[RMDB]
This 177-nucleotide RNA was probed chemically with 2A3. Conditions: 150 mM KOAc, 10 mM MgCl2 and 150 mM bicine (pH 8.5), 24 C. It was measured as part of the RMDB library OK1LIB.

RNA sequence: GGGAACGACUCGAGUAGAGUCGAAAAUUGCGAUUAAUUGAUAGACUCAUCAUUUUUGCGCUGUCGAGAUGGUCUUUUUAUUAAAAAUGCCGUAAUCCAAGCCGUAAUCGGAAUACUGAUUGCAACGCCUCCCCAGGGGUUUCGACCCCUGGGGAGGAAAAGAAACAACAACAACAAC
Reactivity to 2A3 in 0.01 (KOAc 150mM, MgCl2 10mM, bicine 150mM(pH8.5), 24C), signal-to-noise 1, nucleotides 027 to 126: u040u080g000c010g080a040u000u210a000a170u000u020g000a000u050a050g000a000c040u010c300a060u000c000a150u050u000u160u140u230g070c190g000c130u110g050u260c010g050a080g000a040u000g000g110u060c000u000u060u000u000u000a120u100u060a120a000a000a000a000u140g090c010c000g000u030a110a050u100c090c040a050a000g070c100c010g020u090a020a020u120c000g000g160a000a080u120a090c120u120g000a030u030u000g000c000a000a000c140g010